Chemical mapping of a 177-nucleotide RNA with 2A3 and DMS. For 2A3 the reverse transcriptase was SuperScript II with manganese. For 2A3, 4,353 sequencing reads were counted. The DMS profile rests on 4,596 reads. High 2A3 reactivity points to a flexible backbone, as in loops and unpaired stretches. Conditions: 150 mM KOAc, 10 mM MgCl2 and 150 mM bicine (pH 8.5), 24 C.
RNA sequence: GGGAACGACUCGAGUAGAGUCGAAAAGUUAUCCGCGGGGACGAGGUCCGGCAGAUCGCGCCGGGGCAGACGGGCAAGAUAGCGGACUACAAUUAUAAGUUGCCCGACGACUUUACGGGCUGCGUUAGCUUCGAUUCUAAUUCGUUAGAAUCGAAGCAAAAGAAACAACAACAACAAC
Reactivity to 2A3 in 0.01 (KOAc 150mM, MgCl2 10mM, bicine 150mM(pH8.5), 24C), signal-to-noise 4, nucleotides 027 to 126: g030u060u060a080u060c010c000g000c050g030g000g010g050a020c040g030a050g030g180u010c000c000g000g010c020a030g020a240u180c060g030c050g020c140c000g000g010g030g030c010a020g050a140c030g030g000g030c020a040a030g040a140u100a030g020c010g020g000a010c010u050a030c050a120a060u280u150a120u100a300a040g020u050u050g000c000c000c000g020a050c030g020a010c040u120u080u130a060c010g000g020g000c020u030g010c040g030u050u130a030
Reactivity to DMS in 0.01 (KOAc 150mM, MgCl2 10mM, bicine 150mM(pH8.5), 24C), signal-to-noise 2, nucleotides 027 to 126: g010u000u000a110u000c000c020g030c030g020g020g000g010a080c080g020a160g020g000u000c010c020g010g010c020a100g000a060u000c180g020c140g010c010c000g000g010g000g010c070a060g010a100c070g000g010g000c080a050a090g000a080u000a070g030c030g000g010a050c110u000a070c120a090a140u010u010a090u010a080a140g010u010u000g000c000c000c020g000a140c140g020a040c090u010u000u010a150c040g000g000g000c020u000g010c050g010u000u000a130